[RMDB]
The record gives the reactivity of an RNA of 207 nucleotides to DMS and 2A3.

RNA sequence: GGGAACGACUCGAGUAGAGUCGAAAACAGGUAUGAAAACCGGACUGUUGAUAAUUGAUGAGGCAUCACAGAUGUCGGACUUGUCAUUCCUAAUGGCAAUAAGUUCUUGUAAGCCCAAGAGAGUGUUGUUCACUGGAGAUCCACAGCAGAUACCAACCUUUACGACUUUAUUCGUAAAGUCGUAAAGAAAAGAAACAACAACAACAAC
Reactivity to DMS in 0.01 (KOAc 150mM, MgCl2 10mM, bicine 150mM(pH8.5), 24C), signal-to-noise 2, nucleotides 027 to 156: c030a080g020g060u020a090u020g010a090a030a120a110c020c040g000g010a110c040u000g010u000u000g030a100u000a090a120u020u010g020a080u000g030a130g020g010c050a070u020c020a120c070a120g010a080u000g030u000c040g020g010a050c090u000u020g000u020c010a080u010u000c040c090u010a080a090u000g030g000c020a050a060u000a030a100g000u000u000c050u010u010g000u000a050a190g000c060c030c020a030a090g000a070g000a080g000u010g000u000u000g020u010u000c070a060c050u040g000g030a120g000a120u000c030c030a100c040a080g030c050a090g000a110u000a090c060c020a060a200c110
Reactivity to 2A3 in 0.01 (KOAc 150mM, MgCl2 10mM, bicine 150mM(pH8.5), 24C), signal-to-noise 4, nucleotides 027 to 156: c020a010g000g070u070a060u140g080a030a020a040a070c020c000g000g040a010c020u000g090u140u090g050a040u090a170a110u110u090g100a090u140g090a080g090g010c040a020u010c020a010c060a110g060a050u080g050u100c020g030g020a020c040u000u020g000u020c000a010u070u110c050c070u180a080a050u020g020g000c010a000a020u080a110a030g030u030u020c000u030u030g050u030a090a060g010c030c020c040a060a020g050a000g010a030g030u020g000u000u030g000u040u060c040a030c080u050g020g020a170g020a100u030c050c020a100c030a100g000c050a020g010a040u050a050c030c010a030a060c000